The record gives the reactivity of an RNA of 207 nucleotides to DMS and 2A3. DMS adducts were read by reverse transcription with MarathonRT.
RNA sequence: GGGAACGACUCGAGUAGAGUCGAAAAAUCGCGCCUGGUCGGAACAUAACGACGGCGGGCCGGUGGGGAAUCAUGGGGCUACCGUGGGAUAGCGAUGAGACAGCCCCUCCGAUGGCACCAAGCGUCGCACACUGGCCAUACUUCGGUAUGGCCAGAAGUUGUUUAAUCAUUUCGAUGAUUAAACAACAAAAGAAACAACAACAACAAC
Reactivity to DMS in 0.01 (KOAc 150mM, MgCl2 10mM, bicine 150mM(pH8.5), 24C), signal-to-noise 1, nucleotides 027 to 156: a110u000c040g000c050g050c020c000u010g010g040u010c000g010g040a070a240c120a080u000a100a110c030g010a070c020g010g010c050g040g020g010c020c030g020g030u000g020g000g020g040a090a120u000c060a080u030g030g050g040g040c030u000a020c020c000g040u010g000g010g040a110u000a110g000c050g020a080u000g010a110g010a100c020a160g000c000c020c000c000u000c000c030g000a090u000g020g000c000a050c030c040a040a140g010c040g010u000c030g000c010a120c090a180c000u000g000g000c020c000a020u000a010c000u000u010c300g040g070u010a000u010g000g000c000c000a000g000a010a060
Reactivity to 2A3 in 0.01 (KOAc 150mM, MgCl2 10mM, bicine 150mM(pH8.5), 24C), signal-to-noise 3, nucleotides 027 to 156: a000u030c010g000c000g020c000c030u110g070g000u060c040g040g060a190a100c060a210u210a150a020c040g040a000c000g020g060c000g020g010g010c040c000g000g010u070g000g010g000g010a020a070u080c020a070u100g010g000g100g030c010u050a050c030c040g070u100g010g040g030a080u080a060g020c020g050a050u040g010a020g020a030c030a020g020c000c030c010c000u030c010c030g090a100u070g040g000c050a050c110c020a100a030g050c010g050u060c020g020c020a060c000a000c020u000g000g000c000c000a000u000a000c000u010u030c050g030g000u000a000u000g000g000c000c000a000g000a010a010

For 2A3, 2,573 sequencing reads were counted. The DMS profile rests on 3,179 reads. High 2A3 reactivity points to a flexible backbone, as in loops and unpaired stretches.